[RMDB]
RNA sequence: GGGAACGACUCGAGUAGAGUCGAAAACGUAUAGAAGGAGCCGUGGAUAAAAUAUGUCGCAACCGCAAAGGCAAGCAAUGCACCGAUCAUGCUGAAAAAAACACGAGGUGCAUACAUGGUGCUCUCCAUGUAUAACAAGGUUCGCCUUGUUAUACAUAAAAGAAACAACAACAACAAC
Reactivity to DMS in 0.01 (KOAc 150mM, MgCl2 10mM, bicine 150mM(pH8.5), 24C), signal-to-noise 9, nucleotides 027 to 126: c090g010u030a130u020a100g010a120a110g010g010a100g000c040c020g010u010g000g010a090u020a060a080a090a090u020a050u020g010u000c040g020c070a100a100c070c060g000c110a050a080a130g000g000c050a040a080g000c090a080a040u000g000c010a010c000c010g000a120u020c050a070u000g010c150u010g000a000a010a120a090a070a080a100c040a010c070g010a100g000g010u000g010c010a010u010a050c070a040u000g010g020u010g010c040u010c030u000c060c130
Reactivity to 2A3 in 0.01 (KOAc 150mM, MgCl2 10mM, bicine 150mM(pH8.5), 24C), signal-to-noise 9, nucleotides 027 to 126: c020g060u110a110u070a160g150a110a080g040g020a020g010c020c020g020u030g020g020a040u130a110a160a050a030u180a110u110g060u050c040g000c080a060a070c030c020g020c090a100a070a020g030g010c020a010a040g030c020a030a030u020g000c010a010c010c010g030a060u100c020a030u070g040c050u050g110a090a050a020a010a010a020a010c050a010c030g020a030g010g000u010g000c000a000u010a010c000a020u080g050g020u070g030c010u000c000u000c030c010